Structure probing data (DMS and 2A3) for a 207-nucleotide construct.
RNA sequence: GGGAACGACUCGAGUAGAGUCGAAAAUCACACCGCUUCACACAUCAAUCAUCAUCUGAUCAUAUAACGAUCACGUAACAGGAUCGUGAAUGCGUUCGAUACGUUGAACGAUGCGUUCAUUAGACCAAACGGUCUAGACCAAUCGGUCUAUCGCAUGAGAACCUCUUUCAUUCGUGAAAGAGGUUCUAAAAGAAACAACAACAACAAC
Reactivity to DMS in 0.01 (KOAc 150mM, MgCl2 10mM, bicine 150mM(pH8.5), 24C), signal-to-noise 3, nucleotides 027 to 156: u000c070a100c020a170c070c010g010c060u000u000c020a050c030a070c030a170u000c030a080a280u000c040a120u000c050a040u000c090u020g030a060u000c000a160u000a080u010a070a050c030g020a050u000c010a050c090g000u000a140a140c130a230g000g010a030u000c000g050u000g010a050a070u010g000c070g010u000u000c060g010a090u000a050c100g020u010u000g010a000a060c110g010a020u000g000c050g010u000u000c030a110u010u000a040g010a090c020c010a060a130a050c110g030g000u010c060u000a030g010a060c010c000a110a140u000c110g040g000u000c000u000a010u000c020g060c070a120u000g000
Reactivity to 2A3 in 0.01 (KOAc 150mM, MgCl2 10mM, bicine 150mM(pH8.5), 24C), signal-to-noise 4, nucleotides 027 to 156: u060c010a020c050a040c010c060g010c030u060u070c020a030c030a040c030a100u080c060a040a080u050c020a020u020c010a020u010c070u060g050a030u030c020a070u190a080u090a250a070c050g010a000u020c030a020c240g040u050a050a030c030a090g020g010a010u020c010g030u010g020a050a030u100g010c020g010u030u070c020g030a030u030a150c090g020u060u070g020a070a010c040g020a060u040g010c010g030u060u030c070a110u130u130a000g000a010c030c030a160a210a070c170g000g020u000c020u020a000g010a020c000c010a090a180u210c170g000g000u000c000u040a080u010c020g000c020a020u020g030
Values cover nucleotides 27 to 156.